[RMDB]
RNA sequence: GGGAACGACUCGAGUAGAGUCGAAAACGUCAGCCAGAAGCGGGGCGGCCAGCGCCCGGCCGGCAUCCGUCAGCUCCACGGCCAGCUGCAUGUUUUGCGCACGCAGGGUGCGCAGCCAGCCCGCAGCGUAAUGUUUCUCCUUCGGGAGAAACAUUACAAAAGAAACAACAACAACAAC
Reactivity to 2A3 in 0.01 (KOAc 150mM, MgCl2 10mM, bicine 150mM(pH8.5), 24C), signal-to-noise 4, nucleotides 027 to 126: c030g090u070c050a010g050c030c010a060g040a170a010g050c010g000g010g080g050c020g000g020c040c010a030g000c010g040c010c020c000g000g000c020c030g090g000c000a040u030c010c010g060u040c010a020g010c010u040c060c070a150c050g080g010c030c000a010g010c010u050g000c020a040u050g100u060u090u090u080g040c080g000c010a020c030g090c030a030g070g140g000u040g020c040g000c020a000g000c000c010a010g010c000c000c020g010c010a020g020c030
Reactivity to DMS in 0.01 (KOAc 150mM, MgCl2 10mM, bicine 150mM(pH8.5), 24C), signal-to-noise 2, nucleotides 027 to 126: c050g010u040c070a070g000c010c070a140g010a100a160g000c040g000g020g010g030c080g030g000c060c050a140g010c010g000c040c030c020g000g020c000c060g000g000c070a050u000c040c050g070u000c020a040g000c050u000c070c080a100c060g000g030c100c030a080g000c000u000g000c010a030u010g000u020u000u010u000g000c010g010c000a070c130g000c150a070g000g010g010u000g000c070g000c030a000g010c060c080a090g000c010c040c040g020c030a030g000c110
Source: RMDB library OK1LIB, as collected in RNAgym. Chemical mapping of a 177-nucleotide RNA with 2A3 and DMS. The reactions ran in a buffer of 150 mM KOAc, 10 mM MgCl2 and 150 mM bicine (pH 8.5), at 24 C. For 2A3 the reverse transcriptase was SuperScript II with manganese.